[RMDB]
RNA sequence: GGGAACGACUCGAGUAGAGUCGAAAACAAUUUUCUGCAUCCAAAAGAUGGAAUAUGUACGCACUGCAACGAACACGAAAUGUGCAAAGCAUCAAUUUCUGCUCGUAGUGUACGUACGUGCAUACGAACAUGCACAUCCCUUCGGGGAUGUGCAUGUAAAAGAAACAACAACAACAAC
Reactivity to 2A3 in 0.01 (KOAc 150mM, MgCl2 10mM, bicine 150mM(pH8.5), 24C), signal-to-noise 3, nucleotides 027 to 126: c060a040a030u060u000u050u030c050u030g030c000a030u000c020c040a110a020a050a060g060a020u130g010g050a130a110u050a000u030g010u010a000c000g010c010a000c000u010g000c000a040a010c010g000a020a000c000a000c170g030a000a010a030u050g010u020g010c060a220a140a020g000c030a000u110c030a090a160u020u010u010c000u010g010c000u000c000g020u000a100g140u020g000u030a030c240g010u020a010c010g000u000g000c000a000u050a050c110g060a030
Reactivity to DMS in 0.01 (KOAc 150mM, MgCl2 10mM, bicine 150mM(pH8.5), 24C), signal-to-noise 1, nucleotides 027 to 126: c170a190a140u060u000u000u000c010u010g010c010a010u000c000c000a100a140a100a300g000a120u030g000g000a090a070u000a000u000g000u000a000c030g060c010a000c010u000g000c010a060a000c000g000a040a040c000a000c190g030a000a010a000u000g010u000g000c020a090a210a100g020c000a040u010c160a030a000u000u000u000c040u000g000c090u020c030g030u000a000g000u000g000u010a000c140g000u000a060c020g000u000g000c000a000u000a000c200g000a220
The record gives the reactivity of an RNA of 177 nucleotides to 2A3 and DMS.
Conditions: 150 mM KOAc, 10 mM MgCl2 and 150 mM bicine (pH 8.5), 24 C.